[RMDB]
RNA sequence: GGGAACGACUCGAGUAGAGUCGAAAAGAUAUGGAUAGCUUUGAUCGGUACAGGCUAAGACAGUCGGAAACGAUCGAGCCUUGACCGGGAGCUAUCCUAAGUCAAAAGGCAUCGUUCGCGAUGCCAAGUAAUGUACUUACUUCGGUAAGUACAUUACAAAAGAAACAACAACAACAAC
Reactivity to DMS in 0.01 (KOAc 150mM, MgCl2 10mM, bicine 150mM(pH8.5), 24C), signal-to-noise 9, nucleotides 027 to 126: g010a030u000a300u010g010g010a010u000a000g010c010u000u000u010g010a070u020c010g010g010u000a120c070a040g010g010c000u010a140a090g010a110c300a100g000u000c010g010g000a100a080a180c010g010a010u000c080g000a040g000c000c000u000u010g010a040c020c020g000g000g000a020g000c020u000a010u000c000c000u000a010a060g000u000c040a060a070a110a120g000g010c000a010u000c010g010u000u000c210g020c020g010a010u000g000c000c000a000a030
Reactivity to 2A3 in 0.01 (KOAc 150mM, MgCl2 10mM, bicine 150mM(pH8.5), 24C), signal-to-noise 9, nucleotides 027 to 126: g020a010u060a030u110g000g000a010u000a000g000c010u170u150u150g140a170u280c010g000g010u070a130c030a010g010g000c010u040a060a060g110a110c090a050g050u030c010g030g010a050a070a050c010g000a030u090c040g010a010g000c000c000u100u200g040a030c000c000g000g010g010a000g000c000u000a000u000c000c000u000a030a010g030u010c030a020a020a070a140g010g000c000a000u000c010g080u110u100c230g010c020g140a000u000g000c020c000a000a000